Overview: Chemical mapping of a 207-nucleotide RNA with DMS and 2A3. High 2A3 reactivity points to a flexible backbone, as in loops and unpaired stretches.
[RMDB]
RNA sequence: GGGAACGACUCGAGUAGAGUCGAAAACAGAUAAGAAAAGACCGAGAGGUUCAAGCUUAUAGGGCAGAAAGCGGGGGAUAGCAGUACUAAACAUUCCCUGUGGCUGAGACGAAGGUAGUACUCCAACAAAACGAGUACUAGUUCGCUAGUACUCGAAGGGAAGUAAUAUCUUCGGAUAUUACUUCCCAAAAGAAACAACAACAACAAC
Reactivity to DMS in 0.01 (KOAc 150mM, MgCl2 10mM, bicine 150mM(pH8.5), 24C), signal-to-noise 1, nucleotides 027 to 156: c040a240g020a150u010a070a120g010a060a080a200a210g000a050c050c050g010a220g000a120g020g000u010u000c040a210a090g010c010u000u010a120u000a110g010g000g000c030a080g000a040a110a100g020c000g000g000g000g020g010a030u000a080g000c030a040g000u000a180c010u010a030a070a050c070a130u000u010c010c000c020u020g020u000g010g050c020u000g010a140g000a020c000g040a050a130g040g000u000a030g010u000a060c000u010c060c030a040a140c100a060a030a140a210c020g000a060g000u010a050c000u000a000g010u010u000c220g020c000u000a020g010u000a000c010u000c000g030a060a130
Reactivity to 2A3 in 0.01 (KOAc 150mM, MgCl2 10mM, bicine 150mM(pH8.5), 24C), signal-to-noise 2, nucleotides 027 to 156: c030a020g070a090u220a170a040g070a090a100a010a000g020a010c010c030g020a030g000a030g200g010u020u030c030a080a000g010c000u000u140a060u110a230g040g000g000c070a040g120a110a040a010g010c010g010g000g000g010g010a020u010a010g030c010a010g020u030a030c020u080a000a110a000c040a050u040u010c010c000c010u050g050u050g050g000c020u030g030a000g000a040c070g020a030a000g070g000u000a000g010u030a040c050u060c060c020a050a040c010a040a120a030a020c010g000a000g000u010a000c000u010a000g000u000u030c130g010c090u000a000g000u000a000c000u000c000g020a020a010